[RMDB]
RNA sequence: GGGAACGACUCGAGUAGAGUCGAAAAUUACAGGUGAUACAUUAGAUCAUUUAUGGCGAGUAACAAGUUUAAAUCAAGCCAUUGCAUUAGGUAUCGAUGAUAGAAAAGGUAGUAUUAAAGUAAAUAAUAAGAGGGGUAGUUUCGACUACCCCUCUUAAAAAGAAACAACAACAACAAC
Reactivity to DMS in 0.01 (KOAc 150mM, MgCl2 10mM, bicine 150mM(pH8.5), 24C), signal-to-noise 1, nucleotides 027 to 126: u020u000a050c090a120g010g000u010g000a020u010a010c010a090u010u020a050g050a020u010c050a020u000u000u010a000u000g000g000c000g000a260g080u000a010a000c240a040a150g010u040u010u080a000a110a140u040c090a070a300g000c000c000a050u000u040g000c130a020u010u000a120g000g000u000a010u000c040g000a030u010g000a060u000a000g020a100a080a110a100g000g000u000a010g000u050a100u050u000a070a030a100g020u020a030a020a110u030a040a150

The record gives the reactivity of an RNA of 177 nucleotides to DMS. Source: RMDB library OK1LIB, as collected in RNAgym. The RNA was probed in 150 mM KOAc, 10 mM MgCl2 and 150 mM bicine (pH 8.5) at 24 C. Reactivities are given for positions 27 through 126.